[RMDB]
RNA sequence: GGGAACGACUCGAGUAGAGUCGAAAAAAAACAUUGAUCAGGAGUCCACUAGAUCUUUCGUUUUAGUAGGAGAGGCCUCACAGAGGAGAAUAAAAAUCCUUAGUUUGAUAAAUUGUAAAGAUGGCCAGAAUCAACGGUAAUUCGUUACCGUUGAUUCAAAAGAAACAACAACAACAAC
Reactivity to DMS in 0.01 (KOAc 150mM, MgCl2 10mM, bicine 150mM(pH8.5), 24C), signal-to-noise 1, nucleotides 027 to 126: a000a020a050a020c010a000u020u000g000a030u020c010a100g010g010a140g000u000c130c110a070c020u000a100g030a030u000c010u000u000u000c100g030u000u000u000u000a100g010u000a050g040g010a130g000a110g010g010c020c020u000c040a060c060a300g010a030g000g000a010g000a150a080u030a050a090a130a090a230u000c000c000u000u000a050g010u000u010u010g000a110u020a010a040a050u030u050g000u010a070a030a060g030a010u020g020g000c040c030a200
The record gives the reactivity of an RNA of 177 nucleotides to DMS. DMS adducts were read by reverse transcription with MarathonRT. Conditions: 150 mM KOAc, 10 mM MgCl2 and 150 mM bicine (pH 8.5), 24 C. The data come from the RNA Mapping Database (RMDB), library OK2TRN.